[RMDB]
RNA sequence: GGGAACGACUCGAGUAGAGUCGAAAAUAGCGUAGAGUAAUAGCAAUCGUCGUAUUCUACGCAGUGUGUGUGACGAUUGAGAUACACUACAUACACAUGAGACGGUAGUGUUCUCAAACCGUCUCAAGAUAGUAUUGGCAUUCGUGUCGAUGCUAUCAAAAGAAACAACAACAACAAC
Reactivity to DMS in 0.01 (KOAc 150mM, MgCl2 10mM, bicine 150mM(pH8.5), 24C), signal-to-noise 9, nucleotides 027 to 126: u040a090g010c040g010u000a010g000a030g010u000a030a080u030a100g020c070a180a100u040c140g010u030c060g010u000a020u000u000c010u000a010c030g010c030a090g010u020g010u010g000u010g000u010g000a030c000g010a080u000u010g000a040g010a050u040a020c030a030c020u000a020c010a050u020a180c160a110c190a160u030g000a100g010a080c150g000g000u000a030g010u010g000u000u000c000u000c000a050a050a050c090c000g000u000c000u000c040a080a110
Reactivity to 2A3 in 0.01 (KOAc 150mM, MgCl2 10mM, bicine 150mM(pH8.5), 24C), signal-to-noise 9, nucleotides 027 to 126: u190a010g010c010g000u000a000g000a010g040u070a040a130u090a150g060c080a070a180u180c090g130u040c020g010u030a030u030u000c010u010a010c010g000c030a050g020u050g010u010g010u000g020u030g040a010c020g010a040u010u050g020a030g020a040u160a070c040a000c030u030a000c010a030u110a020c050a000c030a120u160g040a020g020a060c060g020g000u020a020g030u020g020u050u000c010u000c000a010a020a020c050c000g000u000c000u000c000a000a020
This 177-nucleotide RNA was probed chemically with DMS and 2A3.
Source: RMDB library OK1LIB, as collected in RNAgym.
Values are in units of 0.01, from 0 to 300, in steps of 10.
The 2A3 profile rests on 201,874 reads.
For DMS, 78,532 sequencing reads were counted.
The RNA was probed in 150 mM KOAc, 10 mM MgCl2 and 150 mM bicine (pH 8.5) at 24 C.